An RNA of 177 nucleotides, treated with 2A3 and DMS and read out base by base. For 2A3, 1,868 sequencing reads were counted.
[RMDB]
RNA sequence: GGGAACGACUCGAGUAGAGUCGAAAAUCACCGUCAGCACGGGCGUCGCGACCAUCAUCAACAUGCCGACCGUCAGCGUGACGAUCUGCGCGCCCGGCACGUCCGCGUGCCAGACGAUCGGCAACGAGCCUACCAGGUGAUUCGUCACCUGGUAGGCAAAAGAAACAACAACAACAAC
Reactivity to 2A3 in 0.01 (KOAc 150mM, MgCl2 10mM, bicine 150mM(pH8.5), 24C), signal-to-noise 1, nucleotides 027 to 126: u090c020a030c110c030g100u060c050a030g030c050a030c000g020g030g000c020g060u140c060g010c020g010a070c070c020a070u060c040a070u040c000a030a080c040a090u110g010c000c010g000a020c000c010g040u030c020a050g000c020g060u090g080a120c080g080a110u050c080u200g010c000g000c000g040c000c050c000g020g000c000a000c000g000u030c070c190g010c000g040u020g020c020c000a020g000a000c000g010a040u020c010g000g000c000a000a020c010g020a000
Reactivity to DMS in 0.01 (KOAc 150mM, MgCl2 10mM, bicine 150mM(pH8.5), 24C), signal-to-noise 2, nucleotides 027 to 126: u000c070a140c040c010g020u000c200a170g000c020a120c110g020g010g020c060g010u010c040g010c050g000a090c100c130a110u010c070a150u000c100a060a090c170a180u000g000c040c010g000a000c020c010g050u000c000a170g000c060g000u000g000a030c090g000a070u010c160u000g010c010g000c050g000c090c140c110g000g000c000a000c010g000u000c110c220g000c030g040u000g000c070c050a230g060a000c010g000a030u000c000g000g000c000a000a030c160g010a120

Notes
For DMS, 926 sequencing reads were counted. Reactivities are rounded to 0.1 and cut off at 0 and 3. Source: RMDB library OK2TST, as collected in RNAgym.